[RMDB]
RNA sequence: GGGAACGACUCGAGUAGAGUCGAAAACAUAUUUAAACUGCUGAAUGAUCCGGUUAAUUGGAUAGGCGUAGUGGCAGGCCACAAGAACAGACUGAUCAUUGCGCUGAAUGGUUUGCUUAAGCCACGACUAUUAAUCGGUAUUCGUACCGAUUAAUAGAAAAGAAACAACAACAACAAC
Reactivity to DMS in 0.01 (KOAc 150mM, MgCl2 10mM, bicine 150mM(pH8.5), 24C), signal-to-noise 9, nucleotides 027 to 126: c070a100u010a080u010u010u010a060a070a120c070u010g010c060u010g020a060a080u000g010a060u000c020c050g010g010u000u010a080a130u010u000g000g010a070u010a110g010g010c010g030u000a040g030u000g000g010c020a090g000g000c030c070a100c140a090a090g010a090a110c210a100g000a090c030u000g000a060u000c020a020u000u000g010c060g010c020u000g010a070a090u000g000g010u000u000u000g010c080u000u000a070a090g010c020c030a050c140g010a230
Reactivity to 2A3 in 0.01 (KOAc 150mM, MgCl2 10mM, bicine 150mM(pH8.5), 24C), signal-to-noise 9, nucleotides 027 to 126: c010a010u160a160u150u220u180a130a150a070c050u090g020c030u060g090a070a070u070g020a080u030c020c020g010g060u130u180a140a090u180u130g060g020a040u040a100g020g000c020g010u020a020g010u000g020g000c010a000g020g050c030c020a080c040a070a050g070a110a030c040a040g080a050c010u030g040a090u070c020a030u010u090g020c030g000c020u010g030a040a040u060g010g020u040u050u060g080c030u110u090a040a010g010c000c010a040c040g060a010